RNA sequence: GGGAACGACUCGAGUAGAGUCGAAAACACCUCCAGAGGACCCCUUCAGCGAACAGAGAGCUCUGAGCCGCGAGGAGUAAGAUCAUAGCGAUAGGAGGAGAUGCUAGGAGUUAGAGGAGACCGAAGCCUAUUAUAGAUGGUUCGCCAUCUAUAAUAGAAAAGAAACAACAACAACAAC
Reactivity to 2A3 in 0.01 (KOAc 150mM, MgCl2 10mM, bicine 150mM(pH8.5), 24C), signal-to-noise 3, nucleotides 027 to 126: c020a060c010c000u000c010c030a060g020a130g190g090a240c040c040c000c000u050u080c060a030g010c020g030a030a010c030a030g050a020g030a030g140c020u000c010u040g050a070g060c030c020g040c040g020a060g030g000a030g010u050a040a050g030a070u030c030a060u100a070g050c020g070a050u080a040g050g010a020g050g020a040g020a010u100g030c010u020a020g060g030a060g030u020u040a060g000a030g000g020a010g010a010c000c010g050a040a000g030c000
Reactivity to DMS in 0.01 (KOAc 150mM, MgCl2 10mM, bicine 150mM(pH8.5), 24C), signal-to-noise 5, nucleotides 027 to 126: c100a170c060c020u010c040c040a140g000a130g000g010a090c070c020c030c020u000u010c110a080g010c040g010a080a060c070a070g010a100g010a140g010c050u000c020u000g010a120g020c050c030g010c070g000a080g010g000a050g010u010a070a100g000a060u000c050a060u010a130g010c040g000a090u010a110g010g010a060g000g000a080g000a060u000g000c050u000a060g010g000a060g000u000u000a060g000a080g000g000a110g000a080c040c040g000a080a120g010c160